[RMDB]
RNA sequence: GGGAACGACUCGAGUAGAGUCGAAAAGAAACGUACGUGGAGACCGCACGUACGGAAACCAUCCUUCACGUACGGAAACCAUCCCCAUCCGAAACGUACGUCUGUAGCGAACACACAUCACCUAAGCAUGCGAAAGGAUGGUAGAUACGCUAGACGACAGAUCGAAGUGUUUCGACACUUCGAUCUGAAAAGAAACAACAACAACAAC
Reactivity to 2A3 in 0.01 (KOAc 150mM, MgCl2 10mM, bicine 150mM(pH8.5), 24C), signal-to-noise 2, nucleotides 027 to 156: g040a000a030a010c020g000u010a000c000g010u000g010g020a070g040a040c030c020g000c060a110c130g060u160a100c020g020g020a060a030a000c040c000a050u080c000c020u010u020c010a010c000g000u000a000c000g010g010a130a110a000c060c020a090u150c000c030c010c000a020u120c060c000g020a130a210a050c040g090u140a070c020g000u010c030u050g220u210a000g000c020g050a090a000c000a010c000a000c000a090u040c030a080c060c050u040a010a000g070c040a050u150g060c050g070a070a070a000g010g000a000u000g000g000u000a000g020a010u140a060c010g010c020u020a000g000a040c050g020a000